[RMDB]
RNA sequence: GGGAACGACUCGAGUAGAGUCGAAAAAUAAGCCGGGGGACUAGCUUUAUGUUGUGUUCACUAGUAAAAUGUGAGGUAGAGUAUAGAGACAGCCAGACACCGAGAAUGUUUUGAUGUUUUCGGUCACCAACCAGACCAGAUUCGUCUGGUCUGGUUGAAAAGAAACAACAACAACAAC
Reactivity to DMS in 0.01 (KOAc 150mM, MgCl2 10mM, bicine 150mM(pH8.5), 24C), signal-to-noise 3, nucleotides 027 to 126: a070u000a060a140g010c030c010g000g010g000g000g010a050c020u000a050g030c040u010u000u030a040u030g000u000u000g010u000g010u020u000c020a090c030u010a040g010u030a050a040a090a070u010g020u020g000a080g040g000u030a060g000a080g020u000a080u000a090g000a090g000a030c010a090g010c030c050a090g000a060c190a070c020c020g000a040g020a010a050u000g010u000u000u050u030g000a020u010g040u000u010u010u010c010g010g010u030c120a070c200
Reactivity to 2A3 in 0.01 (KOAc 150mM, MgCl2 10mM, bicine 150mM(pH8.5), 24C), signal-to-noise 2, nucleotides 027 to 126: a020u110a070a000g030c000c000g000g000g000g010g000a080c000u040a030g010c000u050u090u040a090u230g060u080u030g070u020g040u030u050c030a010c050u050a020g120u190a080a000a120a260u250g030u030g030a000g040g020u110a020g000a050g000u060a010u020a080g030a010g010a020c000a000g030c000c000a020g020a030c040a020c020c000g030a040g030a020a020u080g030u010u020u040u170g170a100u110g000u020u060u100u020c000g050g020u030c000a000c010